The record gives the reactivity of an RNA of 177 nucleotides to 2A3 and DMS. High 2A3 reactivity points to a flexible backbone, as in loops and unpaired stretches. 2A3 adducts were read by reverse transcription with SuperScript II with manganese.

[RMDB]
RNA sequence: GGGAACGACUCGAGUAGAGUCGAAAAUGGUUAGCUCAGAAGGGUCAGAAAUCCUUCAAAGAGUAUAAGGGUAAAAGCUAGCUUGACUGUGUUUCAGCCAAUAGGGAACGCAGAUGCGAAAGCAGGGUCAUGGAGUGUAUUUCGAUACACUCCAUGAAAAAGAAACAACAACAACAAC
Reactivity to 2A3 in 0.01 (KOAc 150mM, MgCl2 10mM, bicine 150mM(pH8.5), 24C), signal-to-noise 5, nucleotides 027 to 126: u060g030g020u060u030a020g020c000u000c040a000g010a010a000g030g010g020u060c040a010g130a120a180a020u030c000c000u010u000c040a090a070a000g020a000g030u110a060u070a190a060g080g000g020u060a060a090a030a010g030c010u020a010g000c000u040u090g070a090c010u020g000u000g020u010u020u010c060a090g100c060c010a100a140u180a210g010g000g040a010a000c000g000c010a010g000a120u100g040c050g040a080a020a010g030c030a020g060g020g000
Reactivity to DMS in 0.01 (KOAc 150mM, MgCl2 10mM, bicine 150mM(pH8.5), 24C), signal-to-noise 9, nucleotides 027 to 126: u020g010g020u010u010a040g010c010u010c050a180g000a010a010g000g010g010u010c170a180g010a100a180a060u010c000c010u010u010c010a120a100a120g010a040g010u010a080u020a110a090g000g000g000u020a050a100a080a070g000c020u010a100g000c010u010u010g000a130c020u000g010u000g000u000u000u000c010a090g000c120c100a060a120u030a110g000g000g000a000a010c010g000c010a000g000a080u010g010c050g000a080a060a060g010c010a090g000g000g010